[RMDB]
Chemical mapping of a 177-nucleotide RNA with 2A3 and DMS. It was measured as part of the RMDB library OK2TST. 2A3 adducts were read by reverse transcription with SuperScript II with manganese. The reactions ran in a buffer of 150 mM KOAc, 10 mM MgCl2 and 150 mM bicine (pH 8.5), at 24 C.
RNA sequence: GGGAACGACUCGAGUAGAGUCGAAAAUUGAAUUGUUUGGAUGAGCGGCGCAGUUCAGAGUACUUUGAGGUUUUGGAGCCAGACUUCAAUAAAAUAAAUAGUUGGCUUACCAAUAGGGAUGGUGCUACUAACACCACUAUUUCGAUAGUGGUGUUAGAAAAGAAACAACAACAACAAC
Reactivity to 2A3 in 0.01 (KOAc 150mM, MgCl2 10mM, bicine 150mM(pH8.5), 24C), signal-to-noise 4, nucleotides 027 to 126: u040u040g020a020a050u050u030g060u110u110u090g090g030a090u040g030a030g040c010g030g000c040g000c040a010g010u040u020c020a010g020a020g080u050a040c030u060u090u070g030a030g040g010u050u050u080u120g050g010a010g010c000c010a050g070a080c020u040u030c050a050a090u150a170a120a020a010u200a030a070a030u120a030g030u020u010g000g000c000u020u030a080c010c010a050a050u050a110g040g010g020a020u050g000g000u020g010c010u040a080
Reactivity to DMS in 0.01 (KOAc 150mM, MgCl2 10mM, bicine 150mM(pH8.5), 24C), signal-to-noise 5, nucleotides 027 to 126: u000u000g010a090a100u010u000g010u000u000u000g010g010a090u010g010a080g020c050g010g010c060g020c020a030g010u000u000c050a040g010a110g010u000a050c070u000u000u000g010a090g000g000u000u000u000u000g010g010a050g000c020c020a060g010a030c020u000u010c090a030a090u000a070a060a060a110u010a070a070a100u000a060g000u000u000g010g010c000u000u000a080c040c020a050a100u000a070g010g000g000a090u010g010g010u000g010c080u000a150